[RMDB]
RNA sequence: GGGAACGACUCGAGUAGAGUCGAAAAGAGUCCUAUUUCGAUAGGACUCAACUAAAAUCAGCGGUAAAUAAUUAGCUGGCGUUUCCGCUGAACGCCAGCAUACUAGCCUCGUCUUCGGACGAGGCAAGGAACUUACCUCUUUCGAGAGGUAAGUUCCAAAAGAAACAACAACAACAAC
Reactivity to 2A3 in 0.01 (KOAc 150mM, MgCl2 10mM, bicine 150mM(pH8.5), 24C), signal-to-noise 1, nucleotides 027 to 126: g010a000g020u000c000c000u010a000u030u100u040c200g080a000u000a010g010g020a000c040u000c000a000a000c010u070a040a000a020a110u030c010a000g060c010g300g290u290a040a060a060u120a050a080u180u220a050g020c000u000g020g000c010g000u000u010u000c030c010g040c000u000g000a010a010c010g030c000c020a000g000c000a010u000a020c030u060a050g000c020c000u000c010g020u000c010u020u030c230g030g000a000c000g010a000g010g000c010a000a000
The record gives the reactivity of an RNA of 177 nucleotides to 2A3.
2A3 adducts were read by reverse transcription with SuperScript II with manganese.
The 2A3 profile rests on 1,136 reads.
Values cover nucleotides 27 to 126.
Conditions: 150 mM KOAc, 10 mM MgCl2 and 150 mM bicine (pH 8.5), 24 C.